Conditions: 150 mM KOAc, 10 mM MgCl2 and 150 mM bicine (pH 8.5), 24 C.
Chemical mapping of a 177-nucleotide RNA with 2A3 and DMS.
The 2A3 profile rests on 18,183 reads.
Values cover nucleotides 27 to 126.
It was measured as part of the RMDB library OK1LIB.
2A3 adducts were read by reverse transcription with SuperScript II with manganese.

RNA sequence: GGGAACGACUCGAGUAGAGUCGAAAAGAAAGAGAGGUUUUUUGCCGUCCUCGAACUGUGUUUUAUACACUGUGUAUGAAGCAGACUAAAAAUACGCUCACGAAAGUGAGUGGAACGGCUAAAGAAACCCAACUAAAUUGUUCGCAAUUUAGUUGGGAAAAGAAACAACAACAACAAC
Reactivity to 2A3 in 0.01 (KOAc 150mM, MgCl2 10mM, bicine 150mM(pH8.5), 24C), signal-to-noise 9, nucleotides 027 to 126: g090a020a130a010g150a010g000a020g010g030u030u020u010u020u070u090g000c000c010g000u010c000c000u010c010g010a060a030c010u010g010u010g080u080u020u040u030a020u010a010c120a060c160u250g180u110g000u210a000u010g010a010a010g000c000a010g030a090c100u200a060a040a040a010a020u170a060c000g000c000u010c000a000c000g070a100a040a020g000u010g000a000g000u000g000g000a010a010c000g010g000c030u060a020a040a010g110a030a060a020
Reactivity to DMS in 0.01 (KOAc 150mM, MgCl2 10mM, bicine 150mM(pH8.5), 24C), signal-to-noise 6, nucleotides 027 to 126: g010a100a080a070g010a270g000a030g000g010u010u010u020u020u020u000g000c000c010g020u000c010c000u000c010g000a170a070c030u010g000u010g000u030u000u000u010a020u000a000c010a280c300u040g020u040g010u000a010u000g000a020a030g000c000a010g010a190c100u030a020a060a070a070a070u030a080c030g000c000u000c000a000c000g000a100a080a160g000u000g000a010g010u010g000g000a060a020c000g000g000c000u000a050a050a070g010a120a080a130